The record gives the reactivity of an RNA of 207 nucleotides to 2A3. Conditions: 150 mM KOAc, 10 mM MgCl2 and 150 mM bicine (pH 8.5), 24 C. The 2A3 profile rests on 1,644 reads.

RNA sequence: GGGAACGACUCGAGUAGAGUCGAAAAAGCGAUGAUACGUCAUCGCAACGAUUGCCUGAUCGUAAAACAGGAGACGGCCGUGGCCGCGACCACGUAAAAAAGCGUAACGUGGUCUACGGGCCACGAAAAAAGCGCGGAACGUUCGCGUUCCGCGCAAUCGAUAGACUACGUUCGCGUAGUCUAUCGAAAAAGAAACAACAACAACAAC
Reactivity to 2A3 in 0.01 (KOAc 150mM, MgCl2 10mM, bicine 150mM(pH8.5), 24C), signal-to-noise 2, nucleotides 027 to 156: a020g000c000g000a000u000g000a000u020a070c210g100u010c020a000u010c000g030c020a020a020c020g000a010u020u030g000c000c000u010g010a010u000c030g120u220a000a000a010a010c000a020g000g030a020g060a050c130g160g030c130c010g010u010g020g000c000c000g060c000g010a000c000c010a010c020g000u080a010a020a060a120a070a000g140c040g050u040a060a000c000g000u000g000g000u000c020u050a050c050g030g000g000c010c000a000c020g020a030a000a000a000a000a010g000c000g000c000g000g000a000a000c000g030u060u060c170g030c000g040u000u020c000c000g000c020g010c010a000a010